[RMDB]
RNA sequence: GGGAACGACUCGAGUAGAGUCGAAAAUCGUUUAUGUGCGACAUGAACGAAGUGGAUACUGUCCUACAGUAUCCAGAUGGCUUCUGUAGAACAGAGGCCAGAGCUAAUCUGUCGCACAGAUUAGCGAGGACAGGUAUGUAUUCGUACAUACCUGUCCAAAAGAAACAACAACAACAAC
Reactivity to 2A3 in 0.01 (KOAc 150mM, MgCl2 10mM, bicine 150mM(pH8.5), 24C), signal-to-noise 7, nucleotides 027 to 126: u060c000g000u000u000u020a010u010g020u010g090c030g030a010c010a010u080g010a090a030c050g030a100a030g120u040g020g000a000u000a000c000u010g030u110c030c040u050a030c000a000g000u000a000u000c000c000a000g040a090u030g010g000c010u000u000c000u000g040u050a060g050a300a050c000a000g000a000g000g000c000c000a010g010a010g000c000u010a020a020u000c000u000g020u020c010g000c010a010c000a000g000a010u030u040a000g010c010g010a050
Reactivity to DMS in 0.01 (KOAc 150mM, MgCl2 10mM, bicine 150mM(pH8.5), 24C), signal-to-noise 8, nucleotides 027 to 126: u010c010g010u000u000u000a040u010g000u000g010c070g010a030c000a010u000g010a010a040c040g010a050a140g030u000g000g000a010u000a010c000u000g010u000c150c130u010a190c000a000g010u000a000u000c000c000a040g010a100u000g010g000c000u000u000c000u000g010u000a140g010a060a300c010a000g000a020g010g020c000c000a000g000a130g000c050u010a030a030u010c010u000g000u000c080g000c030a190c000a000g000a070u000u000a010g010c000g010a100